Structure probing data (2A3) for a 177-nucleotide construct. The RNA was probed in 150 mM KOAc, 10 mM MgCl2 and 150 mM bicine (pH 8.5) at 24 C. The 2A3 profile rests on 740 reads. Reactivities are given for positions 27 through 126.
RNA sequence: GGGAACGACUCGAGUAGAGUCGAAAAGUUCGUUACGACUUGUAUGAUGGUAACAUGUUUAUUAAAUUUCCUGAAGUAGUAUUUGAAAGUACACUUAGGAUUACUAGAACUCUGUCAACUCAGUACUCACCAUCAUUGUCUUCGGACAAUGAUGGUGAAAAGAAACAACAACAACAAC
Reactivity to 2A3 in 0.01 (KOAc 150mM, MgCl2 10mM, bicine 150mM(pH8.5), 24C), signal-to-noise 1, nucleotides 027 to 126: g020u080u110c080g050u030u050a020c000g010a000c000u040u030g020u080a120u130g010a010u040g070g010u020a050a010c010a030u140g040u000u070u040a200u040u120a010a070a160u030u010u010c000c010u020g030a050a000g040u160a050g010u010a010u020u070u120g210a120a130a010g030u010a000c000a010c000u000u000a010g000g000a000u000u030a030c030u010a050g040a060a060c000u000c000u050g020u060c020a010a050c020u000c040a040g000u040a070c010u010